RNA sequence: GGGAACGACUCGAGUAGAGUCGAAAACUUCAAGAGACAUCUCUCAAGGGCUCUGUGGGUAGUAAGUAGCUUCCUAGACGUAACAGCGAGGUCUGCCCACGUCUCCGCUGCGUAACAGAGCGCUGCAAUACCGGUGAUGAUUCGUCAUCACCGGUAUAAAAGAAACAACAACAACAAC
Reactivity to DMS in 0.01 (KOAc 150mM, MgCl2 10mM, bicine 150mM(pH8.5), 24C), signal-to-noise 2, nucleotides 027 to 126: c090u000u050c080a140a090g000a060g020a100c170a120u020c050u000c000u000c090a120a010g000g000g000c000u000c010u000g000u010g000g000g000u000a000g000u000a000a050g000u050a120g000c060u000u000c000c000u000a070g000a020c050g010u000a150a100c070a000g010c050g010a140g000g000u000c030u000g010c010c040c070a110c060g000u010c010u000c100c030g000c010u000g020c030g010u000a230a040c010a040g020a050g020c010g030c010u000g000c140a090
Reactivity to 2A3 in 0.01 (KOAc 150mM, MgCl2 10mM, bicine 150mM(pH8.5), 24C), signal-to-noise 5, nucleotides 027 to 126: c050u140u090c090a080a020g030a020g090a110c050a200u060c060u000c020u030c140a070a090g020g050g010c010u030c040u060g020u060g020g040g040u010a010g000u000a150a150g020u060a030g070c040u080u060c000c010u050a060g030a100c020g070u120a170a030c010a050g040c040g130a050g040g110u020c010u050g030c000c030c000a000c010g000u000c000u020c020c060g000c000u020g000c000g030u030a040a010c010a040g000a000g000c050g060c090u070g010c050a050